[RMDB]
RNA sequence: GGGAACGACUCGAGUAGAGUCGAAAAGGCUCAAGGUGAACCAGCCAGCGUCCUUUGCCGUGCAGCUGAACGGUGCCCGGGGCGUGAUUGAUGCCCGGGUGCACACACCCUCGGGGGCUGUGGAGGAGUGCUACGUCUCUGAGCUGGACAGUGGUGAUAAAAUUAAUCCUUUCGAGGAUUAAUUUUAAAAAGAAACAACAACAACAAC
Reactivity to DMS in 0.01 (KOAc 150mM, MgCl2 10mM, bicine 150mM(pH8.5), 24C), signal-to-noise 1, nucleotides 027 to 156: g020g030c030u000c050a090a070g000g030u010g010a080a090c040c000a150g000c000c000a120g010c070g020u000c040c010u000u010u020g010c000c030g040u000g010c010a120g000c030u000g030a130a040c020g030g020u000g020c000c010c020g020g020g000g000c050g030u000g030a100u010u000g000a110u010g020c000c030c040g040g030g000u020g000c020a090c030a090c030a030c010c000c010u010c050g050g010g020g000g040c030u010g010u000g020g000a150g000g010a080g030u010g020c020u010a050c040g010u000c020u000c050u010g010a190g020c030u000g010g000a060c040a090g020u010g000g010u000g000a240
Reactivity to 2A3 in 0.01 (KOAc 150mM, MgCl2 10mM, bicine 150mM(pH8.5), 24C), signal-to-noise 2, nucleotides 027 to 156: g040g000c030u020c080a000a080g110g010u060g030a080a050c040c010a010g000c020c000a030g010c040g030u130c020c010u040u100u070g050c020c000g000u030g010c030a060g020c030u060g030a080a010c030g030g040u080g140c000c000c000g020g020g000g000c120g030u060g040a210u100u110g060a120u080g010c040c070c090g100g050g040u130g020c000a010c000a000c000a000c010c010c000u020c040g010g000g000g020g000c010u020g020u030g010g050a040g010g030a050g080u040g030c010u070a030c020g010u000c010u000c000u070g030a030g030c020u030g020g010a030c040a040g070u050g030g000u020g030a050